RNA sequence: GGGAACGACUCGAGUAGAGUCGAAAACGGCCGAUCCGCCGUGCGCUGAUCAGCGUGUACGACAAGACCGGGCUGGUAGACCUGGCACAGGGCCUGAGCGCGGCCGGCGUCGAGAUCAUCUCGACUGCCAGGACAAGCGAUUCGUCGCUUGUCCUGGAAAAGAAACAACAACAACAAC
Reactivity to DMS in 0.01 (KOAc 150mM, MgCl2 10mM, bicine 150mM(pH8.5), 24C), signal-to-noise 9, nucleotides 027 to 126: c020g010g010c010c090g010a080u010c110c210g020c030c000g000u000g010c010g020c010u000g000a120u010c180a040g010c030g020u000g000u010a100c060g000a070c160a100a110g000a050c030c020g010g000g010c010u000g000g010u000a060g000a100c050c010u000g010g020c110a100c150a120g010g010g010c020c020u000g010a100g020c060g000c050g000g010c020c030g020g010c100g010u000c000g010a010g010a210u010c210a190u000c010u000c010g000a020c020u010g020
Reactivity to 2A3 in 0.01 (KOAc 150mM, MgCl2 10mM, bicine 150mM(pH8.5), 24C), signal-to-noise 9, nucleotides 027 to 126: c010g010g000c000c030g070a150u050c050c060g000c010c000g020u020g010c030g000c010u100g080a300u200c140a020g000c040g040u020g020u040a060c080g060a060c080a100a050g040a070c010c010g020g070g000c020u060g050g050u060a050g080a160c020c030u040g050g020c080a050c050a180g120g010g000c010c020u070g080a070g020c100g000c010g020g000c010c010g020g030c030g000u000c000g000a000g000a090u220c070a090u060c030u000c000g010a020c050u070g050